[RMDB]
Chemical mapping of a 177-nucleotide RNA with DMS and 2A3. For DMS the reverse transcriptase was MarathonRT. The data come from the RNA Mapping Database (RMDB), library TTRDES. Conditions: 150 mM KOAc, 10 mM MgCl2 and 150 mM bicine (pH 8.5), 24 C. For 2A3, 1,523 sequencing reads were counted.

RNA sequence: GGGAACGACUCGAGUAGAGUCGAAAAGAUAUGGAAUCCGUGAGCAAUGAUGUGGGUCAUCUCGGAAACGAGAUGAGCCCAUUGAGCUCAUAGGAUUCCUAAGUCAAAAUCGGGGUUCGCCCCGAAAGUCAUGGAUAGACUUCGGUCUAUCCAUGACAAAAGAAACAACAACAACAAC
Reactivity to DMS in 0.01 (KOAc 150mM, MgCl2 10mM, bicine 150mM(pH8.5), 24C), signal-to-noise 1, nucleotides 027 to 126: g000a020u000a300u000g000g000a000a010u000c000c000g050u000g000a010g010c000a180a220u020g010a050u000g010u000g020g010g010u000c020a020u000c000u000c010g010g000a220a130a210c010g000a000g030a010u000g000a030g010c000c000c010a000u000u010g010a300g000c010u000c020a010u010a070g040g000a010u000u020c000c010u010a010a060g030u000c020a150a100a120a140u040c010g000g010g000g040u000u010c300g000c060c000c000c000g010a020a050a110
Reactivity to 2A3 in 0.01 (KOAc 150mM, MgCl2 10mM, bicine 150mM(pH8.5), 24C), signal-to-noise 1, nucleotides 027 to 126: g030a040u150a000u150g010g000a000a000u030c030c020g010u010g020a000g000c020a050a300u300g080a120u300g190u120g010g000g070u030c030a000u000c020u000c000g080g000a050a110a040c020g010a000g010a010u020g010a020g000c020c000c010a000u000u000g000a010g000c000u000c000a000u020a000g000g000a000u000u000c000c000u040a030a010g040u000c020a020a000a000a300u040c030g000g000g000g000u050u120c270g140c040c000c000c000g010a010a020a020